[RMDB]
RNA sequence: GGGAACGACUCGAGUAGAGUCGAAAAGUAUCAACUAGUUCGCUAGUUGAUACAAAAGCGUACUACACUCCAACUACCCACCGACUGUAUCCCAAAUAGGAUACGUCGAGGUUGGAGGUGUAUCGCAAAUGGGUUAUGUCGUUCGCGACAUAACCCACAGUGUAGUUAACUUCGGUUAACUACACUGAAAAGAAACAACAACAACAAC
Reactivity to 2A3 in 0.01 (KOAc 150mM, MgCl2 10mM, bicine 150mM(pH8.5), 24C), signal-to-noise 7, nucleotides 027 to 156: g000u010a010u000c000a000a010c000u010a000g040u070u080c210g010c170u000a000g000u000u000g000a000u000a000c000a000a050a000a000g010c010g050u100a060c030u010a010c110a020c010u010c000c000a010a010c010u130a170c040c040c040a040c040c010g000a000c040u300g010u010a000u030c030c030c050a160a300a110u300a140g010g000a000u000a000c000g000u000c000g000a020g000g000u000u000g000g020a020g010g010u010g010u010a220u170c020g010c020a010a040a060u040g000g000g010u010u000a010u010g000u000c010g000u050u080c230g020c000g110a000c000a000u000a000a000c000c000c000a000
Reactivity to DMS in 0.01 (KOAc 150mM, MgCl2 10mM, bicine 150mM(pH8.5), 24C), signal-to-noise 2, nucleotides 027 to 156: g010u000a010u000c000a020a010c000u000a010g030u010u000c300g030c000u000a000g030u000u010g020a010u000a000c000a000a070a100a150g020c010g020u000a080c030u010a020c020a040c000u000c000c010a030a020c010u010a040c000c010c030a300c210c000g010a030c010u030g030u000a000u000c000c000c020a080a170a210u010a030g020g010a030u000a000c000g020u010c000g010a020g010g010u000u010g000g010a030g000g010u000g040u000a110u000c020g010c020a050a070a110u000g020g050g000u000u000a000u000g000u000c000g010u000u030c240g000c000g000a060c000a000u010a000a000c000c020c010a000
Structure probing data (2A3 and DMS) for a 207-nucleotide construct. It was measured as part of the RMDB library RNAMAK.